[RMDB]
RNA sequence: GGGAACGACUCGAGUAGAGUCGAAAAGUACCGAUCGUACGAUCUAGUAUCACAUGGUCUAGACACUAGGUACGAUCCCAUGCGUGCUCUCUAGCUAGUGUCGACAGUACUGACAGCUAGUAUGAUCGUUAACCGUAAUAUUCGUAUUACGGUUAACAAAAGAAACAACAACAACAAC
Reactivity to 2A3 in 0.01 (KOAc 150mM, MgCl2 10mM, bicine 150mM(pH8.5), 24C), signal-to-noise 9, nucleotides 027 to 126: g010u010a010c000c010g010a050u050c030g010u020a010c030g020a060u010c020u040a040g100u140a090u250c070a080c070a300u300g030g000u010c010u020a010g000a010c010a010c040u030a030g040g040u010a010c000g010a020u060c000c010c000a020u190g100c070g140u180g020c010u010c000u000c010u060a010g000c010u010a020g030u010g010u050c010g060a080c050a060g070u070a030c030u110g040a010c030a030g020c010u010a010g020u040a090u160g070a080u100c060
Reactivity to DMS in 0.01 (KOAc 150mM, MgCl2 10mM, bicine 150mM(pH8.5), 24C), signal-to-noise 9, nucleotides 027 to 126: g010u000a050c020c030g000a090u000c050g010u000a030c040g000a080u000c030u000a140g020u010a080u010c160a130c190a140u010g010g000u000c030u000a150g000a020c030a020c040u000a170g010g010u000a000c040g000a090u000c010c020c030a080u000g010c160g010u000g010c100u000c060u000c030u000a050g010c010u000a070g010u000g000u000c010g010a110c140a090g010u000a040c100u010g010a030c210a050g010c020u000a040g000u000a050u010g010a070u010c120